The record gives the reactivity of an RNA of 177 nucleotides to DMS.
Reactivities are given for positions 27 through 126.
For DMS the reverse transcriptase was MarathonRT.
It was measured as part of the RMDB library OK2TRN.
The DMS profile rests on 1,537 reads.
Conditions: 150 mM KOAc, 10 mM MgCl2 and 150 mM bicine (pH 8.5), 24 C.

RNA sequence: GGGAACGACUCGAGUAGAGUCGAAAAAGCGCCAGCUUGGGUGGAGGCGACGUUGGGAUACCACCCUGAUCGUAUCGGAGUUCUAACCUGGUACCGUGAUCCGGUAUGGGGACAGUGUCAGGUGGGCCUGAAUGGGUGUGUUCGCACACCCAUUCAGAAAAGAAACAACAACAACAAC
Reactivity to DMS in 0.01 (KOAc 150mM, MgCl2 10mM, bicine 150mM(pH8.5), 24C), signal-to-noise 2, nucleotides 027 to 126: a080g010c080g000c020c020a060g010c060u000u010g020g010g040u000g010g030a120g020g030c050g040a040c130g010u000u020g050g000g010a100u020a140c080c020a030c020c000c010u000g010a080u000c090g000u000a160u000c070g010g000a110g010u000u000c030u010a070a090c000c020u010g020g000u000a030c040c050g020u010g010a180u010c040c000g000g010u020a100u020g000g000g010g000a050c300a020g000u000g010u000c020a020g010g020u000g000g000g010c070